[RMDB]
RNA sequence: GGGAACGACUCGAGUAGAGUCGAAAAGAUAUGGAGUGGGCCAAGGGAGCUGAAUCGGAAACGAUACCAGCUUUGAUCUUGGCCACUCCUAAGUCAAAACUUUCAUUCACUUCGGUGAAUGAAAGAAUCCGUUAUUUGAGUUCGCUCAAAUAACGGAAAAAGAAACAACAACAACAAC
Reactivity to 2A3 in 0.01 (KOAc 150mM, MgCl2 10mM, bicine 150mM(pH8.5), 24C), signal-to-noise 2, nucleotides 027 to 126: g020a010u060a030u100g010g000a000g030u140g010g260g100c000c000a010a000g140g150g040a000g030c010u000g010a030a000u010c010g020g000a090a010a000c020g010a000u070a200c140c040a020g040c000u160u050u130g060a080u090c010u000u010g000g010c000c000a000c000u020c000c000u010a000a010g000u010c010a000a010a080a140c000u000u000u000c000a030u010u000c000a000c010u040u090c300g100g000u000g000a010a000u010g000a010a000a010g010a020a080
Reactivity to DMS in 0.01 (KOAc 150mM, MgCl2 10mM, bicine 150mM(pH8.5), 24C), signal-to-noise 2, nucleotides 027 to 126: g000a010u000a300u020g000g000a010g040u010g010g030g040c010c000a010a000g000g020g010a000g020c010u000g000a090a010u010c000g000g000a040a050a180c030g020a030u010a130c160c010a020g010c010u000u020u000g020a070u000c000u000u000g010g000c000c000a000c000u000c000c000u020a020a100g020u000c020a080a110a180a120c010u000u000u000c000a000u000u000c000a010c000u020u010c180g030g020u000g000a030a010u000g010a000a010a000g010a060a090

An RNA of 177 nucleotides, treated with 2A3 and DMS and read out base by base.
The 2A3 profile rests on 3,299 reads.
The reactions ran in a buffer of 150 mM KOAc, 10 mM MgCl2 and 150 mM bicine (pH 8.5), at 24 C.
The DMS profile rests on 1,470 reads.
High DMS reactivity at an A or C suggests that its Watson-Crick edge is free.